[RMDB]
RNA sequence: GGGAACGACUCGAGUAGAGUCGAAAACAACACAAACUCUGGCCUAGGGAGGGGUGGGUUGUUAUGGAACUAUGAGUGUCUCAGUGGAGAAGGCCCUACCACUGGGACCCCCAUCUCAAGAAUGACCUGACUGGAAGUGAGACCAGAGCUCUGGCCAAAUUAUGGCUGAUUUCGAUCAGCCAUAAUUAAAAGAAACAACAACAACAAC
Reactivity to DMS in 0.01 (KOAc 150mM, MgCl2 10mM, bicine 150mM(pH8.5), 24C), signal-to-noise 1, nucleotides 027 to 156: c070a100a100c060a140c050a140a080a040c030u000c020u000g030g060c080c000u000a160g020g010g020a160g010g020g000g110u020g010g010g010u010u000g020u000u010a120u020g000g010a100a160c120u010a080u000g000a110g000u030g000u000c000u000c010a040g030u000g020g000a140g010a130a100g020g000c000c000c000u000a080c020c030a040c040u010g000g000g010a010c010c040c010c000c050a050u000c050u040c030a040a120g010a140a150u000g000a100c000c020u000g010a150c040u000g000g010a080a100g020u010g000a140g010a080c010c010a030g000a060g000c030u020c020u000g050g030c020c030a220
Reactivity to 2A3 in 0.01 (KOAc 150mM, MgCl2 10mM, bicine 150mM(pH8.5), 24C), signal-to-noise 2, nucleotides 027 to 156: c000a000a010c030a000c030a040a220a110c030u020c030u030g030g010c020c020u040a040g040g020g010a100g020g010g000g020u100g030g020g020u050u050g040u080u110a120u180g130g080a020a040c050u060a080u160g050a040g080u100g000u010c000u000c010a010g000u000g010g000a050g000a090a090g030g000c000c000c000u070a120c000c000a000c000u000g000g020g000a000c000c010c000c000c000a020u010c020u020c020a100a110g070a060a060u100g050a060c000c030u040g110a080c070u050g010g050a050a050g060u050g120a040g020a000c010c020a000g000a010g070c010u000c010u080g000g010c010c000a020